[RMDB]
RNA sequence: GGGAACGACUCGAGUAGAGUCGAAAAGGACAAUAGUCCAUCGAUCCAUUCAGGAAUGCCUAUCCGUACGAAGGCUAUGAGUUGACAAGCGUACGGAUAUCGUUAGGCAAGGUGAAAUUGCGACGAGGUAUGUACAUUGUUUCGACAAUGUACAUACAAAAGAAACAACAACAACAAC
Reactivity to 2A3 in 0.01 (KOAc 150mM, MgCl2 10mM, bicine 150mM(pH8.5), 24C), signal-to-noise 7, nucleotides 027 to 126: g000g000a010c020a050a180u080a090g000u000c000c000a000u020c010g010a030u000c000c010a000u030u090c020a000g050g090a120a080u070g030c010c000u020a010u010c000c000g010u000a000c010g060a240a100g100g020c010u130a160u250g070a070g110u110u100g080a090c030a040a030g030c010g000u000a000c000g000g000a010u010a030u020c020g020u010u050a060g060g000c010a010a000g070g000u080g060a080a080a110u110u050g010c050g010a000c010g010a050g120
Reactivity to DMS in 0.01 (KOAc 150mM, MgCl2 10mM, bicine 150mM(pH8.5), 24C), signal-to-noise 8, nucleotides 027 to 126: g010g000a030c020a160a150u050a070g000u000c010c000a100u000c060g010a080u010c020c030a080u020u010c060a080g010g010a150a090u010g010c010c010u000a020u010c000c000g000u010a000c020g000a090a070g000g010c060u000a060u040g000a160g010u000u010g010a160c070a080a090g000c000g020u000a010c000g010g010a010u010a010u010c080g020u020u010a080g010g000c010a010a020g020g000u020g020a040a050a110u010u000g000c040g010a060c020g010a060g010
Record summary
Structure probing data (2A3 and DMS) for a 177-nucleotide construct. Reactivities are given for positions 27 through 126.